[RMDB]
RNA sequence: GGGAACGACUCGAGUAGAGUCGAAAAGUUUCUUGAGCUUCCCUGGGAUGAGCGUUUGGGAGAGCUGAUUCUGCAGCCCAGAGAGUAGUCUCAGGGCAUCCUCUGGAGCCUGACCUGUGAUCGUCGCCUUACUACCUUCCUUCGGGAAGGUAGUAAGAAAAGAAACAACAACAACAAC
Reactivity to DMS in 0.01 (KOAc 150mM, MgCl2 10mM, bicine 150mM(pH8.5), 24C), signal-to-noise 2, nucleotides 027 to 126: g010u000u000u000c030u000u020g000a090g020c070u000u000c010c010c010u000g010g020g000a050u000g000a150g000c280g000u000u010u000g000g000g010a110g000a090g030c050u000g000a200u020u010c090u010g020c040a190g010c050c010c010a050g000a040g000a080g010u000a160g000u000c010u010c020a040g000g020g000c090a020u000c060c000u000c040u010g000g010a050g000c040c020u000g010a090c030c030u010g000u000g020a080u010c080g020u000c140g000c120
Reactivity to 2A3 in 0.01 (KOAc 150mM, MgCl2 10mM, bicine 150mM(pH8.5), 24C), signal-to-noise 2, nucleotides 027 to 126: g000u020u090u050c030u040u020g030a020g000c030u030u020c010c010c020u030g020g000g000a060u080g010a040g080c100g020u050u070u080g050g030g020a250g060a090g070c030u050g070a300u210u090c060u170g060c020a030g030c000c010c010a010g000a010g000a010g010u090a010g010u030c000u000c040a000g000g020g030c010a010u010c000c010u000c010u000g050g000a030g000c000c000u010g000a040c000c000u070g030u060g060a090u070c060g060u010c050g100c000